[RMDB]
RNA sequence: GGGAACGACUCGAGUAGAGUCGAAAAGAUAUGGACGUAAGGGAGUCACCGGCUCCGAAGAACAAAGCAUUUCGGAAACGAAAUGCUUUGGGAGGAGCCUGGUGACGAAGAACUUACGUCCUAAGUCCAAGUGAAGGUUGUUCGCAACCUUCACUUGAAAAGAAACAACAACAACAAC
Reactivity to DMS in 0.01 (KOAc 150mM, MgCl2 10mM, bicine 150mM(pH8.5), 24C), signal-to-noise 1, nucleotides 027 to 126: g000a060u030a300u010g010g010a020c010g000u000a010a020g000g000g010a210g020u000c000a010c020c000g010g020c030u000c000c010g050a140a120g030a220a210c010a000a000a000g010c000a010u010u000u000c020g030g010a180a110a190c000g040a000a000a010u000g000c000u010u000u000g000g000g010a150g020g000a010g020c000c000u000g030g010u000g000a000c000g000a030a100g000a170a120c000u000u000a010c030g010u000c000c000u000a000a110g000u000c070

This 177-nucleotide RNA was probed chemically with DMS. The RNA was probed in 150 mM KOAc, 10 mM MgCl2 and 150 mM bicine (pH 8.5) at 24 C. Values are in units of 0.01, from 0 to 300, in steps of 10.